About this RNA: An RNA of 177 nucleotides, treated with 2A3 and DMS and read out base by base. The RNA was probed in 150 mM KOAc, 10 mM MgCl2 and 150 mM bicine (pH 8.5) at 24 C.
[RMDB]
RNA sequence: GGGAACGACUCGAGUAGAGUCGAAAAGUAGACCUCGGGCGCUGGGGCCUCUGCGGGGGCAGCCGGGGACAGCGAGGCCGGGCGGCGGGAGGGUCCCAGCUGGCGCAGGCAGGCUGCCAGGUGGCCCUACGAUACAGAUUUUCGAAUCUGUAUCGUAAAAAGAAACAACAACAACAAC
Reactivity to 2A3 in 0.01 (KOAc 150mM, MgCl2 10mM, bicine 150mM(pH8.5), 24C), signal-to-noise 2, nucleotides 027 to 126: g030u040a030g060a160c000c000u010c060g020g040g000c090g050c050u010g020g000g050g030c010c000u010c030u050g040c150g070g040g050g090g010c030a020g030c020c030g060g000g030g010a070c020a000g190c040g070a070g020g010c020c020g080g060g050c110g010g030c110g030g000g030a070g020g030g000u040c020c010c000a020g010c010u010g020g000c020g000c010a020g170g000c000a010g100g000c010u100g180c030c000a000g020g070u070g070g000c000c030c000
Reactivity to DMS in 0.01 (KOAc 150mM, MgCl2 10mM, bicine 150mM(pH8.5), 24C), signal-to-noise 3, nucleotides 027 to 126: g010u000a130g000a170c010c010u000c100g010g000g020c020g010c040u000g010g010g010g000c000c000u000c020u000g020c110g060g000g010g000g020c040a030g020c020c030g020g000g010g000a070c070a060g010c030g000a250g000g010c020c010g020g010g010c110g020g010c060g010g010g000a180g000g010g000u010c020c010c020a120g000c000u000g000g010c020g000c040a070g010g010c150a050g000g000c020u000g020c010c010a030g010g010u000g020g000c040c000c030